[RMDB]
RNA sequence: GGGAACGACUCGAGUAGAGUCGAAAAGUGCUGUGUGUGGUACCUGGUUUGGAUACCAGAGAGGUUAGGAGACAGCUUCUAAAGAUUUAUCUUGGCGAGGGGAAACCCAGGGUAGCUCCCAUCUGAGGCGUCGAUACUUGUUCGCAAGUAUCGACGCAAAAGAAACAACAACAACAAC
Reactivity to 2A3 in 0.01 (KOAc 150mM, MgCl2 10mM, bicine 150mM(pH8.5), 24C), signal-to-noise 1, nucleotides 027 to 126: g030u030g120c030u010g010u000g010u000g030u120g130g060u050a090c010c000u030g000g100u020u090u300g170g000a150u150a070c000c000a000g000a060g000a040g090g030u120u050a100g000g000a040g010a030c020a050g000c070u000u060c040u130a100a060a000g030a090u000u000u120a050u060c000u020u060g000g000c090g030a090g000g010g000g010a030a070a030c030c030c000a000g000g060g000u000a000g010c060u060c000c030c000a010u020c030u120g130a120g140
The data come from the RNA Mapping Database (RMDB), library RFM100.
This 177-nucleotide RNA was probed chemically with 2A3.
Conditions: 150 mM KOAc, 10 mM MgCl2 and 150 mM bicine (pH 8.5), 24 C.
Values cover nucleotides 27 to 126.